[RMDB]
RNA sequence: GGGAACGACUCGAGUAGAGUCGAAAAUUGCCUGAUUUGCACGGUGGCUUGAUUACACGCUCGCAUUCACGGUCACUUCCGAAGCGCUUUAGUACCUUCCGUCCCGAAACCGCCAACUGCCCGGGAGGGCUGUAGUAGCGUUCGCGCUACUACAGCCAAAAGAAACAACAACAACAAC
Reactivity to DMS in 0.01 (KOAc 150mM, MgCl2 10mM, bicine 150mM(pH8.5), 24C), signal-to-noise 5, nucleotides 027 to 126: u030u010g010c020c010u010g000a060u010u000u000g030c020a060c070g010g010u010g000g030c030u010u000g010a100u020u030a110c110a090c060g000c020u000c040g020c060a080u010u000c050a080c060g000g010u010c050a060c050u000u000c030c040g000a090a080g010c050g020c040u000u020u000a070g010u020a080c050c020u000u010c040c020g000u010c030c010c000g020a060a090a080c070c030g000c030c030a050a070c070u010g010c010c010c030g000g010g010a110g010
Reactivity to 2A3 in 0.01 (KOAc 150mM, MgCl2 10mM, bicine 150mM(pH8.5), 24C), signal-to-noise 9, nucleotides 027 to 126: u100u100g060c000c000u060g040a120u050u020u140g060c050a030c070g060g020u040g040g000c020u050u070g040a070u140u130a050c050a010c060g030c020u040c020g030c020a040u080u070c040a030c070g050g010u020c020a020c070u060u010c010c020g030a070a030g020c020g010c040u060u070u100a050g020u080a090c000c000u030u020c010c010g030u020c010c000c000g010a060a040a020c030c010g000c020c010a030a030c060u060g010c000c010c000g030g030g010a100g060
An RNA of 177 nucleotides, treated with DMS and 2A3 and read out base by base. The reactions ran in a buffer of 150 mM KOAc, 10 mM MgCl2 and 150 mM bicine (pH 8.5), at 24 C. It was measured as part of the RMDB libraries RFM100 and RFMREP. For DMS the reverse transcriptase was MarathonRT.